[RMDB]
Structure probing data (2A3) for a 207-nucleotide construct.
RNA sequence: GGGAACGACUCGAGUAGAGUCGAAAACGUCAAGCCUCACAAUGCUAACUAGUGGGGAUUUGGCGUAACUUUGUUAGCCGCUCUCUCGUCUCAUCCGAAGCGAGGGAAAAGAUUAGGAUUGCCCAUCACUUCCGCCUUGGGGGCUUGAGCAAAGCGACGCUCAUACGCAGUUCGCUGCGUAUGAGCGAAAAGAAACAACAACAACAAC
Reactivity to 2A3 in 0.01 (KOAc 150mM, MgCl2 10mM, bicine 150mM(pH8.5), 24C), signal-to-noise 2, nucleotides 027 to 156: c010g010u000c000a010a010g000c000c000u020c000a040c030a040a090u180g020c020u110a030a190c030u030a090g020u000g010g000g020g020a070u050u000u040g000g000c000g020u000a010a020c060u100u150u160g000u030u050a000g030c000c000g000c020u030c010u020c000u000c000g280u020c110u050c050a230u140c100c060g050a020a000g000c030g010a020g000g040g010a000a210a020a020g090a100u180u210a050g070g040a090u070u160g100c000c000c010a050u020c010a000c030u060u000c020c010g090c010c040u040u100g010g000g000g000g020c020u000u030g030a000g000c030a030a020a030g040c010g070a010

The data come from the RNA Mapping Database (RMDB), library RSTRND.